Conditions: 150 mM KOAc, 10 mM MgCl2 and 150 mM bicine (pH 8.5), 24 C.
An RNA of 177 nucleotides, treated with 2A3 and DMS and read out base by base.
Reactivities are rounded to 0.1 and cut off at 0 and 3.
For DMS the reverse transcriptase was MarathonRT.
The DMS profile rests on 5,153 reads.
RNA sequence: GGGAACGACUCGAGUAGAGUCGAAAACACGGAAUAAUAAAAGCAGAGGAGUAGAGAGUACUCACCUGUCGUCGGUAGAGAGUACUCACCUGUCUUCGGUAGAGAGUACUCACCUGUCGUCGGUAGAGAAAUCAGUUUAGUUCGCUAAACUGAUUUCAAAAGAAACAACAACAACAAC
Reactivity to 2A3 in 0.01 (KOAc 150mM, MgCl2 10mM, bicine 150mM(pH8.5), 24C), signal-to-noise 6, nucleotides 027 to 126: c050a020c040g080g110a120a130u170a230a030u110a060a170a050a020g030c030a020g060a070g150g000a010g020u050a010g040a020g010a010g160u020a020c000u010c020a100c020c010u030g020u060c010g000u000c000g010g010u030a010g020a000g000a000g010u000a000c000u000c010a070c010c000u070g130u170c110u180u150c100g030g000u060a110g080a010g000a000g120u000a010c000u010c020a090c020c000u010g010u000c000g000u000c010g020g010u090a030g020a010
Reactivity to DMS in 0.01 (KOAc 150mM, MgCl2 10mM, bicine 150mM(pH8.5), 24C), signal-to-noise 5, nucleotides 027 to 126: c070a090c180g000g010a100a090u010a080a110u000a070a110a090a130g020c050a050g000a130g000g000a030g000u000a010g000a160g000a120g010u000a010c020u000c010a070c070c000u000g020u000c020g000u000c020g020g000u000a030g010a180g000a010g010u000a000c000u000c010a050c110c020u000g000u010c080u010u000c160g010g020u000a080g030a190g000a020g000u000a010c000u000c000a070c140c000u000g000u000c010g030u000c000g000g010u000a040g000a220